[RMDB]
Structure probing data (DMS and 2A3) for a 207-nucleotide construct. It was measured as part of the RMDB library M2RFPK. For DMS, 3,517 sequencing reads were counted. Conditions: 150 mM KOAc, 10 mM MgCl2 and 150 mM bicine (pH 8.5), 24 C. Values are in units of 0.01, from 0 to 300, in steps of 10. In probing experiments dimethyl sulfate is read out at A N1 and C N3, which are open when not base-paired. The 2A3 profile rests on 1,620 reads.

RNA sequence: GGGAACGACUCGAGUAGAGUCGAAAAAGCGCGCAUACUACGGUAUGCGCGCAAUCAGAAAUCGGGAAUGAUGUUCUCCCCUGCGAUUCCAAAACCGCUGUUUCGCUGAUGACGUCUGCUUUUUUAAUCACCACCGUUUGGUUCGCCAAACGGUGAAGAAUACUACUGUCUUCGGACAGUAGUAUUCAAAAGAAACAACAACAACAAC
Reactivity to DMS in 0.01 (KOAc 150mM, MgCl2 10mM, bicine 150mM(pH8.5), 24C), signal-to-noise 1, nucleotides 027 to 156: a110g040c000g080c040g010c010a000u010a050c020u000a110c300g020g000u000a010u000g000c000g050c000g000c010a000a000u010c070a080g000a060a060a050u010c060g010g000g030a110a080u020g020a110u000g010u010u000c050u000c010c010c020c030u000g000c040g030a080u010u000c000c140a060a090a060a050c020c050g040c010u020g010u010u000u010c030g070c020u000g020a080u000g020a080c070g000u000c050u000g040c000u010u010u020u010u000u000a110a090u000c000a110c090c000a000c060c000g040u000u010u000g000g000u000u000c300g000c010c000a020a000a010c010g000g020u000g000a000a020
Reactivity to 2A3 in 0.01 (KOAc 150mM, MgCl2 10mM, bicine 150mM(pH8.5), 24C), signal-to-noise 3, nucleotides 027 to 156: a000g000c010g020c040g020c000a010u020a000c040u020a030c140g090g000u010a030u020g030c010g080c020g000c000a000a020u020c010a010g110a030a080a030u140c060g030g030g030a050a080u100g060a080u060g080u070u010c020u050c030c000c000c000u010g000c010g020a030u080u010c060c030a040a040a080a110c080c030g000c070u050g020u010u050u030c010g020c040u020g030a090u060g040a070c030g030u010c020u010g120c120u060u100u030u010u040u170a100a110u120c040a020c100c000a000c040c000g000u010u000u010g000g010u030u030c130g030c040c000a000a000a000c000g000g000u000g000a000a000